This 207-nucleotide RNA was probed chemically with DMS and 2A3. For DMS, 6,662 sequencing reads were counted.
RNA sequence: GGGAACGACUCGAGUAGAGUCGAAAAGAGUAUCCGAGCCUGCCUGUGUGGGGCAGGUACGGGGAGUACGAGUGGGUACCCGGCAUGCCAUUCUACCAGCUCUGCUCCUCCGGCGUCCACGGGUUCUACAAGGUCCAUCUCAGCCUUGCCAGCGAGAAUAUAAAUCCAGUUUCGACUGGAUUUAUAUAAAAGAAACAACAACAACAAC
Reactivity to DMS in 0.01 (KOAc 150mM, MgCl2 10mM, bicine 150mM(pH8.5), 24C), signal-to-noise 2, nucleotides 027 to 156: g000a150g040u000a060u000c010c020g010a240g020c020c000u000g000c000c010u010g010u010g060u020g030g020g020g020c010a000g000g030u000a000c030g020g010g010g010a080g020u000a000c100g010a060g040u000g010g010g000u000a060c110c040c060g010g040c070a100u000g000c050c020a170u000u010c030u010a030c020c010a170g050c000u030c010u000g000c010u000c000c010u000c020c020g030g010c070g020u010c020c030a080c030g020g010g000u000u000c020u010a050c020a040a060g000g010u000c050c040a130u010c080u010c030a180g000c010c010u000u000g000c020c080a150g020c030g000a090g010a150
Reactivity to 2A3 in 0.01 (KOAc 150mM, MgCl2 10mM, bicine 150mM(pH8.5), 24C), signal-to-noise 3, nucleotides 027 to 156: g040a020g020u080a030u040c000c010g000a020g020c010c000u010g000c000c000u120g030u060g100u170g220g010g010g000c010a020g000g010u010a000c010g000g010g010g000a010g000u010a060c190g010a010g010u080g040g010g020u030a040c070c110c100g020g000c050a040u090g040c010c020a060u160u120c040u050a090c030c030a020g010c000u000c000u010g000c000u010c000c000u030c010c010g030g020c030g070u040c050c010a030c030g010g000g000u040u030c030u040a080c040a100a030g040g000u010c020c010a080u010c030u000c010a030g010c010c000u010u010g030c010c000a000g000c010g010a020g020a060

2A3 adducts were read by reverse transcription with SuperScript II with manganese. Values cover nucleotides 27 to 156.